RNA sequence: GGGAACGACUCGAGUAGAGUCGAAAAGUAGUUUGAACUAUGGCUCUUACCGAAGAUAGUGAAACAGCGGCAUCUGUCUCAAAUCUGGGAGAUUGAGCUGUGCAAGAUACAGAGGUUAAAUUCAACAGAUGCAACGAAUCGAUUUUGACUGAUGUAGUCCUGUCCCUAAUUUCGAUUAGGGACAGGAAAAAGAAACAACAACAACAAC
Reactivity to DMS in 0.01 (KOAc 150mM, MgCl2 10mM, bicine 150mM(pH8.5), 24C), signal-to-noise 2, nucleotides 027 to 156: g040u000a050g000u010u040u020g020a090a120c020u000a040u000g030g000c010u000c020u000u000a100c010c010g000a140a070g000a030u010a060g000u020g020a090a120a060c010a090g010c050g030g030c080a060u010c020u000g000u010c020u000c040a040a110a030u030c080u010g000g000g010a170g010a140u000u000g030a080g010c010u010g050u000g010c040a060a090g010a160u000a040c060a050g000a300g000g010u020u000a010a040a070u000u010c020a080a110c080a130g030a050u020g010c070a100a180c200g000a070a090u000c030g010a130u000u020u000u000g020a030c050u010g010a300u000g000u000a080g030
Reactivity to 2A3 in 0.01 (KOAc 150mM, MgCl2 10mM, bicine 150mM(pH8.5), 24C), signal-to-noise 2, nucleotides 027 to 156: g070u080a010g000u000u090u200g070a080a010c020u040a050u050g030g000c000u020c000u040u130a050c030c050g010a090a000g030a090u050a030g140u050g040a130a080a040c050a020g020c010g100g000c040a080u050c020u030g060u000c000u010c030a090a220a160u070c050u070g000g110g000a090g020a020u070u100g020a010g030c020u000g000u010g010c040a070a000g010a090u020a030c010a000g000a010g030g000u030u050a020a010a040u130u060c020a050a030c000a090g030a050u090g070c000a000a070c040g090a030a050u060c030g020a040u030u000u100u130g040a040c030u080g060a030u180g040u160a000g130
Overview:
Source: RMDB library OK3TST, as collected in RNAgym. Structure probing data (DMS and 2A3) for a 207-nucleotide construct. The DMS profile rests on 2,371 reads.